[RMDB]
RNA sequence: GGGAACGACUCGAGUAGAGUCGAAAAGAGAAAACUGGAUGCCCUUUGAAAGCUGAGCUUGACAUGGUGGAAACGGAUGAACAAUCAGGGUUGUACACCCAGUGUGGCGUUCAAAUGGAGGAUUCUUUAGAGUUUCCAUUUUAUGCUGCCGAUGAGGCAAAGUGGGUAUAUUCGUAUACCCACUUUGAAAAGAAACAACAACAACAAC
Reactivity to DMS in 0.01 (KOAc 150mM, MgCl2 10mM, bicine 150mM(pH8.5), 24C), signal-to-noise 4, nucleotides 027 to 156: g010a190g000a050a040a070a100c060u000g020g020a090u000g010c020c000c020u000u000u010g010a050a070a100g010c030u000g010a100g000c050u000u010g020a130c070a080u000g010g030u000g000g000a070a070a120c080g020g010a090u000g020a090a080c070a070a100u000c050a120g010g020g020u000u000g020u000a100c070a070c010c010c000a140g000u000g030u010g010g010c010g010u000u010c110a020a020a060u000g000g010a080g000g010a070u000u000c040u000u010u000a170g020a090g030u000u000u000c000c010a060u020u000u000u000a060u010g030c000u000g020c000c020g020a100u000g010a170g000g000
Reactivity to 2A3 in 0.01 (KOAc 150mM, MgCl2 10mM, bicine 150mM(pH8.5), 24C), signal-to-noise 3, nucleotides 027 to 156: g070a000g030a010a100a020a030c080u090g030g020a020u080g030c040c000c000u050u070u130g100a100a060a000g010c030u060g010a020g020c000u040u070g030a040c020a060u080g010g030u020g020g040a050a090a060c030g080g010a050u070g050a070a050c020a070a050u130c020a050g060g000g020u040u000g060u060a070c060a040c070c010c010a030g020u060g010u020g170g010c020g010u010u040c090a020a030a030u020g000g010a020g070g020a030u030u090c050u160u300u200a130g010a030g030u010u000u010c000c000a010u020u010u000u010a030u060g010c010u000g000c000c010g050a080u150g030a100g030g000